[RMDB]
An RNA of 177 nucleotides, treated with DMS and 2A3 and read out base by base.
The RNA was probed in 150 mM KOAc, 10 mM MgCl2 and 150 mM bicine (pH 8.5) at 24 C.
The 2A3 profile rests on 1,430 reads.
It was measured as part of the RMDB library M2PK50.
RNA sequence: GGGAACGACUCGAGUAGAGUCGAAAAUGCUGAGCUUUCGAGCUCAGCAGAGGCAAGCAAGCAGCGCAACGAGACAAGACGAGCAUAAGAUCGAGCAUGCUUCAAUACGGCACUUCGGUGCCGUAAAUGCAAUAUCCAUCUUCGGAUGGAUAUUGCAAAAAGAAACAACAACAACAAC
Reactivity to DMS in 0.01 (KOAc 150mM, MgCl2 10mM, bicine 150mM(pH8.5), 24C), signal-to-noise 2, nucleotides 027 to 126: u000g000c010u010g000a030g010c000u000u000u000c150g000a040g040c000u000c000a000g000c000a000g000a110g010g000c090a040a080g010c080a040a060g030c060a020g020c070g000c030a060a070c120g000a060g000a050c110a080a060g020a080c160g000a050g000c060a040u000a160a120g000a070u000c080g030a130g030c030a040u000g010c090u010u020c100a060a170u000a020c020g000g000c020a000c000u000u030c180g020g020u000g000c000c000g010u000a000a030a080
Reactivity to 2A3 in 0.01 (KOAc 150mM, MgCl2 10mM, bicine 150mM(pH8.5), 24C), signal-to-noise 1, nucleotides 027 to 126: u020g000c000u010g000a000g000c000u080u060u180c250g090a000g000c000u000c000a000g000c000a020g030a000g060g020c050a010a100g030c000a010a010g020c030a000g010c030g000c100a060a110c070g050a000g020a030c040a050a010g100a050c090g030a040g050c010a040u060a130a060g070a080u120c040g000a020g060c030a040u050g020c000u080u060c020a000a030u050a000c000g000g030c000a000c010u050u080c160g050g020u000g000c000c000g000u000a000a000a000